[RMDB]
RNA sequence: GGGAACGACUCGAGUAGAGUCGAAAAACCAUCCUAUUCGUAGGAUGGUGCACCAUUGCCGUUUGUAUAUAAUACCGCAGGCGGAAAAGCGGUUCAAAUAAGGAACUUGUCAGUUCGCUGACAAGAAUGAAACUCUUUCUUUCGAGAAAGAGUUUCAAAAAGAAACAACAACAACAAC
Reactivity to 2A3 in 0.01 (KOAc 150mM, MgCl2 10mM, bicine 150mM(pH8.5), 24C), signal-to-noise 1, nucleotides 027 to 126: a000c000c010a050u080c000c000u030a080u020u090c260g060u030a010g000g000a010u010g000g000u000g000c010a050c040c000a100u020u160g070c010c000g000u000u040u030g070u020a090u020a000u020a300a180u080a100c020c090g000c010a070g060g000c030g080g000a060a110a030a030g120c120g050g030u070u090c080a130a060a060u160a150a110g060g010a040a100c000u000u010g000u020c010a000g000u030u090c190g000c060u000g000a000c020a020a010g030a000a000
Reactivity to DMS in 0.01 (KOAc 150mM, MgCl2 10mM, bicine 150mM(pH8.5), 24C), signal-to-noise 3, nucleotides 027 to 126: a020c000c000a000u000c000c000u000a010u000u010c170g040u000a000g010g000a010u010g000g000u010g000c170a230c000c000a090u020u000g000c020c010g020u000u000u000g020u000a080u000a090u000a130a120u000a090c130c100g020c040a050g020g000c040g000g010a060a050a080a100g000c050g010g010u010u000c120a070a070a090u030a120a120g010g000a110a110c000u000u000g000u000c000a020g000u000u010c220g010c000u000g010a010c000a000a000g000a050a100
Source: RMDB library M2PK50, as collected in RNAgym. Structure probing data (2A3 and DMS) for a 177-nucleotide construct. The reactions ran in a buffer of 150 mM KOAc, 10 mM MgCl2 and 150 mM bicine (pH 8.5), at 24 C. The 2A3 profile rests on 925 reads.